Structure probing data (2A3) for a 177-nucleotide construct. Values are in units of 0.01, from 0 to 300, in steps of 10. The 2A3 profile rests on 284 reads.
RNA sequence: GGGAACGACUCGAGUAGAGUCGAAAAUGGUAUAUCUGCAGGAAUACCUUCAUUAGUUAAUAAUGAAUUAAUAUUGCAUGAUAAGGCAACUUCAGUGGUAAACUAUUUUAAUCAUUUGUCUGAAUCUCGCGUACUAGGUGUUCGCACCUAGUACGCGAAAAGAAACAACAACAACAAC
Reactivity to 2A3 in 0.01 (KOAc 150mM, MgCl2 10mM, bicine 150mM(pH8.5), 24C), signal-to-noise 1, nucleotides 027 to 126: u060g000g030u000a090u000a040u280c000u200g100c070a100g030g000a040a000u000a000c000c000u000u000c000a000u000u000a030g160u000u120a200a000u000a010a130u090g040a010a030u090u000a120a000u040a070u030u220g000c000a040u130g070a250u180a070a100g020g020c090a000a000c000u040u070c090a000g000u130g190g000u260a110a070a000c000u000a160u040u030u030u050a030a150u300c070a010u010u010u010g100u000c130u050g100a000a120u000c030u000